[RMDB]
The record gives the reactivity of an RNA of 207 nucleotides to 2A3. The reactions ran in a buffer of 150 mM KOAc, 10 mM MgCl2 and 150 mM bicine (pH 8.5), at 24 C. The data come from the RNA Mapping Database (RMDB), library M2RFPK.
RNA sequence: GGGAACGACUCGAGUAGAGUCGAAAAAUCACCGGUGGGGAACCCCAUACGGCAACGGCGUAGAAGUAAAUGCUAACCAAUCCGUGGUAUCUACGCGACGGAGCAUCCACGGAUAACUCUAUCAAGGCUAAGCGUCUCGGUUUCGACCGAGACGCAACCGUGUAUUAGUCUUCGGACUAAUACACGGAAAAGAAACAACAACAACAAC
Reactivity to 2A3 in 0.01 (KOAc 150mM, MgCl2 10mM, bicine 150mM(pH8.5), 24C), signal-to-noise 1, nucleotides 027 to 156: a000u050c010a000c000c010g020g010u010g000g020g070g080a120a120c070c000c030c010a010u130a160c000g010g000c030a070a030c070g000g000c000g000u020a000g000a040a010g030u070a020a020a010u080g030c040u070a050a120c070c050a050a080u010c000c000g020u000g000g000u050a030u000c010u020a000c020g010c000g030a030c060g060g050a020g020c000a010u000c000c000a020c030g010g000a000u010a040a010c040u050c090u180a130u220c050a200a080g130g000c070u170a160a080g030c000g000u000c000u010c000g050g020u010u130u030c130g070a050c000c000g000a000g000a000c020g010c000a000a010